Structure probing data (2A3 and DMS) for a 177-nucleotide construct. Reactivities are given for positions 27 through 126. The reactions ran in a buffer of 150 mM KOAc, 10 mM MgCl2 and 150 mM bicine (pH 8.5), at 24 C. 2A3 is a SHAPE reagent: it acylates the 2'-hydroxyl of flexible nucleotides of all four kinds. In probing experiments dimethyl sulfate is read out at A N1 and C N3, which are open when not base-paired.
RNA sequence: GGGAACGACUCGAGUAGAGUCGAAAAUGUCUAGUGUACAGAAUUCAGUGUAGGCCGGGAGUUGAGACUGGUGUGUGUUUAGUGGAUUAUCUGAUCAGCACAUGUGUGACAGUGUUGAUCACAAGUCAUUGUACUCAUGUUUCGACAUGAGUACAAUAAAAGAAACAACAACAACAAC
Reactivity to 2A3 in 0.01 (KOAc 150mM, MgCl2 10mM, bicine 150mM(pH8.5), 24C), signal-to-noise 6, nucleotides 027 to 126: u080g020u010c040u040a050g030u030g020u110a090c050a010g080a130a090u080u100c020a030g030u010g050u110a060g000g010c030c020g050g010g010a070g030u030u060g050a040g020a060c060u030g030g030u020g000u010g000u000g010u020u070u040a110g010u060g060g040a060u060u040a060u140c060u030g000a000u000c000a010g020c020a040c080a150u060g050u040g070u110g130a040c010a040g010u000g000u000u000g000a000u010c000a000c010a000a030g030u050c020
Reactivity to DMS in 0.01 (KOAc 150mM, MgCl2 10mM, bicine 150mM(pH8.5), 24C), signal-to-noise 9, nucleotides 027 to 126: u010g010u010c040u010a090g020u010g010u010a050c060a070g000a110a070u010u010c070a060g020u010g010u020a090g010g010c050c040g010g000g000a080g010u000u000g000a070g010a080c070u010g010g010u000g010u000g010u000g010u010u000u000a100g010u010g010g000a090u010u010a090u020c190u000g000a010u000c010a010g010c000a020c000a070u010g020u010g030u020g020a090c060a060g010u000g010u000u010g000a020u000c000a030c190a050a080g000u010c100